[RMDB]
RNA sequence: GGGAACGACUCGAGUAGAGUCGAAAAGUCUCAGGGCAUCCUCUGGAGCCUGACCUGUGAUCGUCGCAUCAUAGACCGCCAGUAGACCUGGGAGCAGAUUCACCGCCGCGGCCGUCUCCUUUAAGUGUCUUAUCGAGCCAUUCGUGGCUCGAUAAGAAAAAGAAACAACAACAACAAC
Reactivity to 2A3 in 0.01 (KOAc 150mM, MgCl2 10mM, bicine 150mM(pH8.5), 24C), signal-to-noise 3, nucleotides 027 to 126: g080u030c010u020c050a020g040g000g000c020a150u040c020c000u060c070u080g020g020a030g040c010c040u080g040a050c000c000u070g000u030g060a040u020c040g060u100c070g100c050a020u000c000a010u040a040g030a050c050c050g010c020c000a020g050u080a020g010a060c000c020u000g010g010g040a040g040c030a000g050a070u050u090c030a030c030c020g010c010c000g010c020g020g000c000c010g020u020c020u070c010c000u040u060u120a100a070g060u090g030
Reactivity to DMS in 0.01 (KOAc 150mM, MgCl2 10mM, bicine 150mM(pH8.5), 24C), signal-to-noise 2, nucleotides 027 to 126: g000u000c010u020c010a180g020g010g040c060a140u030c090c010u030c090u050g020g000a110g020c030c030u000g000a120c100c000u030g020u020g060a030u000c060g020u090c140g000c070a090u030c050a040u020a010g000a140c080c040g040c020c020a040g000u020a050g020a060c120c010u000g010g010g020a070g010c070a040g020a140u010u020c040a110c020c040g020c020c040g010c090g000g000c030c030g000u030c040u000c020c000u020u020u000a030a090g060u030g030